[RMDB]
RNA sequence: GGGAACGACUCGAGUAGAGUCGAAAAAAUUCAGCCCCGGUAGUGUCGGCUGUAAUCUUCUCACGUGCGGUCUCACUGUCAAGCCCUGUGUAUUGCCCAGAAUUGACUAGCACGCCGUCGUCGGUGUAUGCUGUGUCAGAAAUGUCUGGGGGGAUUGGCAGUUACUAGUAUUCGUACUAGUAACUGCAAAAGAAACAACAACAACAAC
Reactivity to DMS in 0.01 (KOAc 150mM, MgCl2 10mM, bicine 150mM(pH8.5), 24C), signal-to-noise 2, nucleotides 027 to 156: a070a090u010u000c010a060g050c010c000c000c000g030g030u000a060g010u000g030u020c050g030g030c000u010g000u020a070a030u010c040u000u000c030u000c040a080c060g020u000g030c030g030g010u000c030u000c060a090c050u030g010u000c050a080a110g040c020c010c040u000g030u000g010u010a080u000u020g010c010c000c000a090g020a070a140u010u000g000a050c020u000a030g010c000a110c040g000c010c030g020u000c300g000u010c030g030g080u000g010u000a060u010g020c000u000g010u010g010u010c010a070g010a110a080a090u000g010u000c010u000g010g000g020g020g010g030a160u000u000g000
Reactivity to 2A3 in 0.01 (KOAc 150mM, MgCl2 10mM, bicine 150mM(pH8.5), 24C), signal-to-noise 3, nucleotides 027 to 156: a010a010u120u060c050a050g000c030c000c000c040g180g070u220a090g030u090g080u170c070g000g000c000u010g040u080a060a030u030c040u130u020c040u010c000a050c110g070u060g000c000g000g010u010c030u030c060a040c030u040g030u030c030a030a050g030c020c000c010u050g020u000g010u120a120u140u190g080c020c000c000a000g010a040a030u070u020g000a000c000u000a000g000c010a000c020g020c000c000g200u300c100g130u230c010g000g000u010g010u040a110u040g010c000u010g010u020g000u140c010a010g080a020a120a010u210g050u030c000u000g000g000g000g020g020g010a070u050u090g050
An RNA of 207 nucleotides, treated with DMS and 2A3 and read out base by base. DMS adducts were read by reverse transcription with MarathonRT. It was measured as part of the RMDB library OK3TST. The RNA was probed in 150 mM KOAc, 10 mM MgCl2 and 150 mM bicine (pH 8.5) at 24 C.